The record gives the reactivity of an RNA of 177 nucleotides to DMS. Conditions: 150 mM KOAc, 10 mM MgCl2 and 150 mM bicine (pH 8.5), 24 C. It was measured as part of the RMDB library M2PK50. For DMS the reverse transcriptase was MarathonRT. The DMS profile rests on 974 reads. Values cover nucleotides 27 to 126.
RNA sequence: GGGAACGACUCGAGUAGAGUCGAAAAUCGUCGAGCUUCGGCUCGACGAAAAACGCUAACUGUAAAGCGAAGGGUGGAGCGAACGGCGCCUAACGACCCCUCAAAGAGACCCCUUCGGGGGUCUCAAGAUAUAGAGGGUGUUCGCACCCUCUAUAUCAAAAGAAACAACAACAACAAC
Reactivity to DMS in 0.01 (KOAc 150mM, MgCl2 10mM, bicine 150mM(pH8.5), 24C), signal-to-noise 1, nucleotides 027 to 126: u000c000g030u010c010g040a020g010c020u000u000c230g020g040c000u000c010g010a020c000g000a000a040a080a100a080c040g040c040u010a090a080c150u000g010u010a100a070a110g000c010g010a050a120g000g000g010u020g010g000a080g000c010g000a060a040c070g010g000c050g010c040c020u020a070a080c070g010a140c050c010c000c040u000c080a040a100a190g000a010g000a020c000c000c000c000u010u000c130g050g020g000g010g010u000c000u000c010a000a040